Overview: Source: RMDB library M2RFPK, as collected in RNAgym. The record gives the reactivity of an RNA of 207 nucleotides to DMS and 2A3. The RNA was probed in 150 mM KOAc, 10 mM MgCl2 and 150 mM bicine (pH 8.5) at 24 C. For 2A3, 1,890 sequencing reads were counted. 2A3 adducts were read by reverse transcription with SuperScript II with manganese. DMS adducts were read by reverse transcription with MarathonRT.
[RMDB]
RNA sequence: GGGAACGACUCGAGUAGAGUCGAAAAUUACUCUUGUUAGGUGAAAGUUGAUGGUCGCCGAGCCAGUCCGUACAUCCAAAAAGGACUCUAUGUAGUAGGAAGUCGAGAGCCUAUUAGAGUUAGAGUCAUGCCUAUUUUGUGUUCGCACAAAAUAGAACAUCGGAUAAAUCUUCGGAUUUAUCCGAUGAAAAGAAACAACAACAACAAC
Reactivity to DMS in 0.01 (KOAc 150mM, MgCl2 10mM, bicine 150mM(pH8.5), 24C), signal-to-noise 2, nucleotides 027 to 156: u010u000a110c020u000c070u000u000g010u000u000a050g030g010u010g000a130a070a140g010u000u000g010a120u010g010g010u010c030g010c020c050g030a130g020c000c060a110g010u000c010c030g030u000a090c090a070u010c040c040a030a060a050a160a170g000g010a030c010u010c030u000a020u020g000u000a040g040u000a040g020g000a080a080g000u000c190g000a260g000a240g000c010c000u000a030u010u010a040g010a140g030u000u000a050g000a050g020u000c010a100u000g010c070c000u000a020u000u010u010u000g020u010g000u000u010c300g000c030a030c000a030a000a010a020u000a010g010a070a130
Reactivity to 2A3 in 0.01 (KOAc 150mM, MgCl2 10mM, bicine 150mM(pH8.5), 24C), signal-to-noise 3, nucleotides 027 to 156: u090u050a040c000u010c000u050u050g030u020u150a080g010g010u060g040a130a050a060g070u100u110g050a090u080g090g000u050c070g010c080c010g010a010g010c000c030a010g060u030c020c020g010u040a040c010a120u040c080c020a060a090a020a040a030g140g000a010c000u000c000u010a020u040g040u010a010g020u010a010g030g040a110a050g070u140c140g050a040g020a010g170c010c010u010a000u040u000a020g050a030g090u000u020a000g010a000g010u020c010a040u120g040c010c000u000a000u000u000u000u000g010u000g030u010u060c130g010c060a010c000a000a000a000a000u010a000g000a010a000